[RMDB]
RNA sequence: GGGAACGACUCGAGUAGAGUCGAAAAUGCUCUUCUAUGUCUUCAUCGUCAUCACAAAUUUCUUCAAACUUAAAUAUCUUAAGGACCUUCAACGGACUUGAUAAUAGAGAUUAACGAACUUUGUGAUCAUCAUGUGUAUGUUCGCAUACACAUGAUGAAAAGAAACAACAACAACAAC
Reactivity to 2A3 in 0.01 (KOAc 150mM, MgCl2 10mM, bicine 150mM(pH8.5), 24C), signal-to-noise 3, nucleotides 027 to 126: u080g020c010u030c010u050u010c030u050a080u160g040u000c000u030u030c010a050u040c040g120u040c010a010u010c010a020c010a030a030a050u020u020u030c010u040u070c040a020a060a090c000u010u050a030a120a050u050a050u010c030u090u090a050a100g160g060a300c000c010u090u110c120a070a060c080g020g000a000c010u010u000g000a010u010a060a020u040a060g050a000g030a030u040u080a030a020c040g000a000a010c020u040u010u020g060u020g040a060u040
Reactivity to DMS in 0.01 (KOAc 150mM, MgCl2 10mM, bicine 150mM(pH8.5), 24C), signal-to-noise 2, nucleotides 027 to 126: u000g000c040u000c020u000u020c020u010a070u000g010u010c020u000u000c040a050u030c060g000u000c040a040u000c000a010c010a080a000a060u010u000u010c000u010u010c190a060a050a060c050u010u010a070a120a170u000a040u000c010u010u020a040a030g020g000a180c000c020u000u000c300a090a130c180g020g000a300c000u000u000g000a020u010a020a050u000a190g000a030g000a100u000u010a070a120c120g000a030a030c160u000u000u000g000u000g000a080u000